[RMDB]
RNA sequence: GGGAACGACUCGAGUAGAGUCGAAAAGACUGGAAAGCCUUCGUCGUCUUGCUGGAAGUGUCCGAAGGCGAUGUAUUCGUUAAUUGCUUCGUAGGGACAUUGACCCUUUGACAAUUCCAGAGCGUAGAUUCGUCCGAAUAUUCGUAUUCGGACGAAUAAAAGAAACAACAACAACAAC
Reactivity to 2A3 in 0.01 (KOAc 150mM, MgCl2 10mM, bicine 150mM(pH8.5), 24C), signal-to-noise 3, nucleotides 027 to 126: g010a000c040u040g020g050a080a030a050g050c010c000u050u040c030g050u000c010g020u000c020u040u090g070c020u040g020g020a080a040g040u020g020u070c050c050g030a010a000g030g020c020g000a010u020g060u050a150u030u080c020g010u010u140a140a070u180u110g040c060u080u070c050g060u070a050g010g080g040a010c010a080u030u170g090a270c000c000c000u000u010u010g010a010c000a030a050u020u000c000c000a010g000a040g030c050g050u020a030g020
Reactivity to DMS in 0.01 (KOAc 150mM, MgCl2 10mM, bicine 150mM(pH8.5), 24C), signal-to-noise 5, nucleotides 027 to 126: g010a060c030u000g010g020a110a130a110g010c030c040u000u010c070g000u010c070g010u000c020u000u000g020c020u000g010g000a040a060g010u000g010u000c030c030g010a020a020g010g010c010g010a010u000g020u000a090u010u000c080g010u010u000a100a110u010u020g010c160u010u000c050g010u000a120g010g000g010a070c060a080u000u000g000a190c130c000c010u000u000u000g010a020c000a040a070u000u000c020c010a030g010a100g010c120g000u010a110g010

Structure probing data (2A3 and DMS) for a 177-nucleotide construct. The DMS profile rests on 5,798 reads. Values cover nucleotides 27 to 126. For 2A3 the reverse transcriptase was SuperScript II with manganese. The RNA was probed in 150 mM KOAc, 10 mM MgCl2 and 150 mM bicine (pH 8.5) at 24 C. The 2A3 profile rests on 3,089 reads.